This 177-nucleotide RNA was probed chemically with DMS and 2A3. 2A3 adducts were read by reverse transcription with SuperScript II with manganese. The 2A3 profile rests on 1,291 reads. For DMS the reverse transcriptase was MarathonRT.
RNA sequence: GGGAACGACUCGAGUAGAGUCGAAAACGGAACCGACGUUGGGUGCGGACGGCGACCCUAGUCACCAUCCAGUCGCGACUUCGGGUUUGCUCGACACCCAGGUCGGUGACCACGACGUCGACGCCGGGUCGGGUCGUUAGUUCGCUAACGACCCGACAAAAGAAACAACAACAACAAC
Reactivity to DMS in 0.01 (KOAc 150mM, MgCl2 10mM, bicine 150mM(pH8.5), 24C), signal-to-noise 1, nucleotides 027 to 126: c120g000g000a300a060c000c000g020a020c010g040u010u000g010g020g020u000g010c110g000g010a130c300g000g000c000g000a000c010c040c060u000a030g020u000c000a010c050c080a100u060c130c170a060g010u010c120g000c040g000a010c000u020u020c230g010g000g010u000u000u020g010c000u000c080g010a130c010a000c000c000c030a030g010g000u030c010g000g000u000g000a050c010c030a130c000g000a030c110g000u010c070g010a070c160g040c020c050g000g000
Reactivity to 2A3 in 0.01 (KOAc 150mM, MgCl2 10mM, bicine 150mM(pH8.5), 24C), signal-to-noise 1, nucleotides 027 to 126: c040g000g000a030a010c000c000g020a000c090g070u180u020g000g000g020u000g040c070g100g090a090c020g060g000c000g000a000c010c010c000u030a000g020u030c010a040c060c010a080u230c070c040a050g180u170c040g080c020g000a000c000u060u080c070g000g000g000u060u030u280g060c130u180c110g090a190c030a000c000c030c000a000g010g000u000c000g000g040u020g010a000c030c000a020c040g010a020c000g170u150c030g030a050c070g010c030c020g030g030
Conditions: 150 mM KOAc, 10 mM MgCl2 and 150 mM bicine (pH 8.5), 24 C. Source: RMDB library OK2TST, as collected in RNAgym. Values cover nucleotides 27 to 126.